[RMDB]
RNA sequence: GGGAACGACUCGAGUAGAGUCGAAAAAGCAUGUUAGGUUCGCAUGGUGCACUAUUGUGUUAUUAGUAACGAAGUAAGCUUACAAUCGAAAAUGUUUAACCAUAAAAGGGUAAAAUGGUGUAAGACAGAUACCCUCUGAGCUUCGGCUCAGAGGGAACCUUUCUUAUUGGUUCGCCAAUAAGAAAGGAAAAGAAACAACAACAACAAC
Reactivity to 2A3 in 0.01 (KOAc 150mM, MgCl2 10mM, bicine 150mM(pH8.5), 24C), signal-to-noise 5, nucleotides 027 to 156: a000g060c050a030u090g010u110u090a060g040g060u070u090c050g010c070a050u070g030g030u040g020c020a020c050u080a120u160u090g020u010g040u070u030a080u060u040a090g100u050a070a010c050g010a060a020g040u080a040a040g020c020u030u030a050c050a060a090u070c080g050a050a050a020a070u040g040u040u070u020a030a010c000c000a020u110a120a150a020a030g080g010g010u060a030a050a030a040u050g030g010u030g020u050a040a040g020a020c010a010g060a050u120a130c000c000c000u000c000u000g000a000g010c000u020u110c270g060g000c000u000c000a000g000a000g000g000g000a000a000
Reactivity to DMS in 0.01 (KOAc 150mM, MgCl2 10mM, bicine 150mM(pH8.5), 24C), signal-to-noise 3, nucleotides 027 to 156: a050g040c030a040u000g020u010u010a080g020g000u000u000c060g010c050a090u010g020g010u010g010c050a040c040u000a120u000u010g020u000g000u010u010a070u000u000a100g040u000a060a100c040g000a080a140g020u000a040a110g020c010u000u000a030c010a060a110u010c050g010a080a060a090a070u000g000u000u010u000a040a060c010c010a090u000a050a080a120a130g010g000g000u000a020a030a050a040u000g020g020u000g000u020a040a070g020a080c030a080g010a150u000a100c010c000c000u000c000u000g030a000g030c010u000u000c300g050g000c020u000c010a010g010a030g010g000g010a000a010